[RMDB]
This 177-nucleotide RNA was probed chemically with 2A3 and DMS. The DMS profile rests on 3,941 reads. As a SHAPE reagent, 2A3 marks flexible, mostly unpaired nucleotides at the ribose 2'-OH.
RNA sequence: GGGAACGACUCGAGUAGAGUCGAAAAGAUAUGGACGGUGAACUACUGUGAGGCUAUCUAACUUCGAUGAAAGUAAUCGGAAACGAUUACUGGAGAAGGUGAUAGCCUCACAGCACCGUCCUAAGUCGAAUAUAGCAACGUUCGCGUUGCUAUAUUCAAAAGAAACAACAACAACAAC
Reactivity to 2A3 in 0.01 (KOAc 150mM, MgCl2 10mM, bicine 150mM(pH8.5), 24C), signal-to-noise 1, nucleotides 027 to 126: g100a060u140a070u290g000g010a060c020g000g030u020g010a130a090c110u300a030c020u300g040u020g000a000g020g040c010u010a010u010c020u070a110a300c010u020u020c040g300a300u170g000a020a010a000g000u010a000a010u000c000g000g050a050a050a050c000g020a000u010u010a010c000u020g000g000a020g000a000a000g000g000u010g010a000u000a020g000c000c000u000c000a020c020a000g000c000a010c010c000g000u000c000c000u000a010a000g010u010c020
Reactivity to DMS in 0.01 (KOAc 150mM, MgCl2 10mM, bicine 150mM(pH8.5), 24C), signal-to-noise 3, nucleotides 027 to 126: g030a080u020a300u000g020g000a010c000g010g000u000g000a080a050c070u010a300c000u010g010u000g010a030g000g020c000u000a000u000c000u000a180a180c010u000u000c000g010a180u010g020a160a080a030g000u010a010a000u000c000g020g000a160a100a170c000g000a010u010u000a000c000u000g010g000a030g010a010a000g010g000u000g010a020u000a000g010c010c000u000c000a000c000a000g000c000a000c000c010g020u000c000c000u010a010a080g000u010c130